Source: RMDB library ARCHII, as collected in RNAgym. Structure probing data (2A3 and DMS) for a 207-nucleotide construct. DMS adducts were read by reverse transcription with MarathonRT. The DMS profile rests on 1,865 reads. 2A3 adducts were read by reverse transcription with SuperScript II with manganese.
RNA sequence: GGGAACGACUCGAGUAGAGUCGAAAAAAAGUUGGGCCUCACGGUCCAUAAUGUGGCAGGCACCGCGUGAGGCUGGCUUCACAGAGCAGCGACAACUGCCCGCUUCCAACGGUGGAAGGAUAACGGGCCGCUGCACUCCUAGGCCGCUUGGGCCUCGCAAAGGAAGGAUGUUCGCAUCCUUCCUUUGAAAAGAAACAACAACAACAAC
Reactivity to 2A3 in 0.01 (KOAc 150mM, MgCl2 10mM, bicine 150mM(pH8.5), 24C), signal-to-noise 2, nucleotides 027 to 156: a000a000a010g070u100u080g070g010g000c000c000u000c040a010c030g020g050u040c030c000a000u070a030a160u190g090u230g100g050c100a050g050g090c140a060c040c030g010c030g070u050g030a000g040g000c080u010g000g010c000u080u020c100a030c020a070g000a020g040c000a000g000c000g090a020c110a180a090c100u130g000c000c000c030g010c000u000u000c010c040a170a170c200g140g120u060g010g040a010a010g000g000a070u130a140a060c000g010g000g000c000c000g000c000u000g010c000a010c000u000c000c020u000a010g000g000c020c000g030c210u100u100g030g040g000c020c000u060c030g040
Reactivity to DMS in 0.01 (KOAc 150mM, MgCl2 10mM, bicine 150mM(pH8.5), 24C), signal-to-noise 1, nucleotides 027 to 156: a050a010a010g020u010u000g070g010g010c010c010u010c120a060c040g000g040u000c000c040a020u010a000a060u010g060u000g010g020c060a170g040g020c050a060c050c020g030c060g010u010g000a050g020g050c000u010g020g010c010u010u010c070a100c140a100g000a140g000c020a070g000c050g030a100c040a060a080c030u020g010c000c000c020g030c020u000u000c000c010a040a180c070g030g050u020g040g060a170a300g000g010a040u010a010a130c040g030g000g030c000c070g000c010u010g030c000a070c020u000c030c050u000a060g030g000c000c000g060c180u040u010g010g020g000c030c010u010c090g000